[RMDB]
RNA sequence: GGGAACGACUCGAGUAGAGUCGAAAACUUAUCCGGUUUUAACGCUGUUUUAUUGCCGCAAAGGUUUACGGAUAAACAACUAAUAAUUAAACCUUUUGUGUGCGAAACGUGGUUGUUUAACGUACUCACUGCCCCCAGGGAUUCGUCCCUGGGGGAACUGAACGGCUAGAUUCGUCUAGCCGUUCAGAAAAGAAACAACAACAACAAC
Reactivity to 2A3 in 0.01 (KOAc 150mM, MgCl2 10mM, bicine 150mM(pH8.5), 24C), signal-to-noise 1, nucleotides 027 to 156: c000u040u040a010u000c020c030g010g010u000u000u010u000a090a020c120g010c060u080g140u040u120u030u110a130u150u240g020c010c000g000c000a000a000a000g000g000u020u000u000a000c000g000g000a010u060a060a080a000c030a000a050c040u270a040a110u250a170a010u190u090a040a020a000c000c000u020u030u120u050g020u000g010u020g010c010g030a050a040a040c020g010u110g020g010u060u020g000u010u030u000a030a000c030g010u010a060c040u030c080a060c070u030g020c000c000c000c000c000a000g000g010g000a000u040u020c050g020u040c100c000c000u000g000g000g030g000g000a000a000

Conditions: 150 mM KOAc, 10 mM MgCl2 and 150 mM bicine (pH 8.5), 24 C. The record gives the reactivity of an RNA of 207 nucleotides to 2A3. Values cover nucleotides 27 to 156.